Record summary
The record gives the reactivity of an RNA of 207 nucleotides to DMS and 2A3. Conditions: 150 mM KOAc, 10 mM MgCl2 and 150 mM bicine (pH 8.5), 24 C. Values are in units of 0.01, from 0 to 300, in steps of 10. The data come from the RNA Mapping Database (RMDB), library OK3TST.
[RMDB]
RNA sequence: GGGAACGACUCGAGUAGAGUCGAAAAGCCAUUGUGCGGAUGGCCCGGCACAAUGAAGAUCGAAGCCCGAUGGUUGAGCCAAAAAGGAACGCGCACCGACGACAAUCGCGACCAUGCGGGGAUCGCGGAAAGACAUGGCGAAUUCCUUGCUAUCCUGGAAUCAACGGUAAUUCGUUACCGUUGAUUCAAAAGAAACAACAACAACAAC
Reactivity to DMS in 0.01 (KOAc 150mM, MgCl2 10mM, bicine 150mM(pH8.5), 24C), signal-to-noise 1, nucleotides 027 to 156: g010c070c050a050u000u010g020u000g010c000g000g000a100u010g010g040c030c050c020g020g050c020a020c000a070a000u010g010a110a040g010a140u000c050g020a160a200g000c070c000c010g000a080u000g040g050u000u000g000a040g020c040c080a040a070a170a160a090g000g000a020a040c090g000c060g050c000a160c040c020g080a190c080g000a130c120a090a120u000c000g020c030g000a080c030c010a040u000g070c080g050g040g030g000a050u000c010g060c020g020g000a110a060a130g000a040c040a080u000g000g010c010g000a020a070u000u000c000c020u000u000g030c010u000a130u000c060c040u020g000
Reactivity to 2A3 in 0.01 (KOAc 150mM, MgCl2 10mM, bicine 150mM(pH8.5), 24C), signal-to-noise 3, nucleotides 027 to 156: g010c000c000a010u000u000g010u000g000c030g030g000a140u070g120g090c040c010c060g080g030c010a000c010a000a030u050g050a050a030g040a040u110c090g060a060a020g030c010c010c030g050a130u100g000g040u090u070g050a010g030c050c070a100a070a000a020a010g000g010a030a060c020g010c020g000c040a060c050c010g180a230c010g010a010c070a010a120u060c040g000c010g020a090c070c070a080u240g080c030g000g020g010g000a010u020c000g000c000g040g000a080a130a010g050a070c090a060u130g080g000c000g010a020a050u040u000c000c000u030u030g000c010u030a100u130c030c050u090g090